[RMDB]
RNA sequence: GGGAACGACUCGAGUAGAGUCGAAAAUAAAUGUGCAGAAUCCUUGUAUUCCAAUGAGGUUUUCACCUCUGUGUGAAAAUAACAGAAUCAAUAUAGAUGGUCACCUUGAUUUACCUAAGAAGAUAUAUAGAUAUGUUAGAAAUGCUCAUUGCAGAAAACCUGAAUAAGGGUUCGCCCUUAUUCAGGUAAAAGAAACAACAACAACAAC
Reactivity to 2A3 in 0.01 (KOAc 150mM, MgCl2 10mM, bicine 150mM(pH8.5), 24C), signal-to-noise 2, nucleotides 027 to 156: u050a000a080a020u070g050u040g070c030a000g050a080a090u030c020c000u090u120g030u040a090u040u040c040c060a020a050u060g010a020g040g000u000u000u000u140c020a040c000c070u170c160u130g060u090g000u020g150a000a000a000a100u050a010a020c040a030g060a090a090u010c010a030a000u100a000u030a110g130a150u040g040g000u040c020a070c010c020u060u110g030a070u160u090u110a000c020c010u040a020a060g010a110a000g000a150u070a020u050a050u040a130g000a010u120a010u110g000u020u000a020g060a110a080a040u040g010c010u010c030a020u070u120g000c070a000g140a040a160a010
Reactivity to DMS in 0.01 (KOAc 150mM, MgCl2 10mM, bicine 150mM(pH8.5), 24C), signal-to-noise 1, nucleotides 027 to 156: u000a020a070a070u000g020u000g000c060a100g010a210a150u010c020c040u000u000g000u010a150u000u020c090c000a090a110u000g000a080g000g040u020u000u000u000c090a060c000c030u010c070u020g000u020g020u000g000a020a060a010a090u010a020a120c070a090g000a110a080u000c040a010a140u000a110u000a080g000a120u020g010g000u000c040a040c080c050u010u000g000a110u000u000u010a020c050c020u010a010a210g020a150a130g000a050u000a090u010a130u000a140g000a080u000a040u040g000u010u000a080g000a120a060a110u000g000c020u000c040a090u000u000g020c040a130g000a160a100a060